An RNA of 207 nucleotides, treated with DMS and 2A3 and read out base by base. DMS adducts were read by reverse transcription with MarathonRT. It was measured as part of the RMDB library M2RFPK. Conditions: 150 mM KOAc, 10 mM MgCl2 and 150 mM bicine (pH 8.5), 24 C.
RNA sequence: GGGAACGACUCGAGUAGAGUCGAAAAAAUGGCACUGCAGAGCUGAUGGGCCAUGUACCUAUCCAAAAUGAGAUCCCAUCUUGCACACUGUGCUAAUUUGCGAUUCUCAUGCCUCCUACUUGGAGAGACCGCAUGCCCAGCUUCGGCUGGGCAUGAAUCUAUUAGUGCAGUUCGCUGCACUAAUAGAAAAAGAAACAACAACAACAAC
Reactivity to DMS in 0.01 (KOAc 150mM, MgCl2 10mM, bicine 150mM(pH8.5), 24C), signal-to-noise 2, nucleotides 027 to 156: a040a050u010g000g020c050a080c020u000g020c050a160g000a160g010c020u000g000a040u000g010g000g000c040c010a110u000g040u000a080c080c040u000a140u030c070c120a040a050a140a010u010g000a090g000a160u000c000c000c020a050u000c040u000u000g010c010a090c060a120c100u000g000u000g010c010u010a050a120u000u000u000g010c020g000a080u010u000c000u000c020a110u010g000c030c000u000c010c000u000a120c170u000u000g020g000a140g010a150g020a040c020c080g030c020a030u000g030c000c000c000a020g010c030u000u010c300g040g000c000u000g020g030g000c000a000u000g020a010a130
Reactivity to 2A3 in 0.01 (KOAc 150mM, MgCl2 10mM, bicine 150mM(pH8.5), 24C), signal-to-noise 2, nucleotides 027 to 156: a010a000u050g000g020c040a040c050u070g000c060a030g010a050g140c020u040g020a060u030g000g030g000c040c000a020u040g080u040a110c050c060u080a100u180c090c040a060a060a010a140u070g020a060g010a170u060c040c000c000a010u000c000u070u180g000c000a030c020a000c030u120g010u030g020c010u050a070a180u000u030u030g030c020g040a030u060u060c020u010c020a010u090g030c020c010u020c000c010u060a200c080u110u160g000g000a020g010a020g030a050c040c110g000c020a000u010g000c030c020c000a010g000c020u010u050c190g100g000c010u000g000g010g000c000a000u000g000a000a020